[RMDB]
RNA sequence: GGGAACGACUCGAGUAGAGUCGAAAAGAUAUGGAAUCCGCGUCUUUUGACGGUUCGGGUCGGAAACGAUCUCUAGCGUGACCGAUAAGACGUGGAUUCCUAAGUCAAACUAUGGUUCGCCAUAGAACAUAUGCACAUACUUCGGUAUGUGCAUAUGAAAAGAAACAACAACAACAAC
Reactivity to DMS in 0.01 (KOAc 150mM, MgCl2 10mM, bicine 150mM(pH8.5), 24C), signal-to-noise 8, nucleotides 027 to 126: g000a030u000a300u010g000g000a030a000u000c010c000g020c000g000u000c000u000u000u010u010g010a170c100g000g000u000u000c030g010g000g020u000c000g010g010a080a060a140c010g010a010u000c010u010c170u010a130g030c220g020u020g010a020c010c000g020a110u010a010a010g000a010c000g030u000g000g000a010u000u000c000c000u000a010a050g000u000c020a100a100a230c000u000a010u000g000g000u010u010c250g010c000c000a010u000a000g000a110a250
Reactivity to 2A3 in 0.01 (KOAc 150mM, MgCl2 10mM, bicine 150mM(pH8.5), 24C), signal-to-noise 7, nucleotides 027 to 126: g010a020u050a030u100g010g000a010a010u000c000c010g000c010g020u000c040u040u240u110u270g270a130c020g000g000u030u020c030g020g000g000u010c010g010g000a030a050a010c000g000a020u020c100u040c130u190a080g110c050g300u300g070a010c010c020g090a140u070a240a010g010a000c010g000u000g010g000a000u000u000c000c000u000a000a000g000u000c020a050a040a060c010u010a010u010g000g080u040u070c290g040c080c010a010u010a010g040a050a000
Annotation: Structure probing data (DMS and 2A3) for a 177-nucleotide construct. It was measured as part of the RMDB library TTRDEL. The reactions ran in a buffer of 150 mM KOAc, 10 mM MgCl2 and 150 mM bicine (pH 8.5), at 24 C. Reactivities are given for positions 27 through 126. For DMS, 13,499 sequencing reads were counted.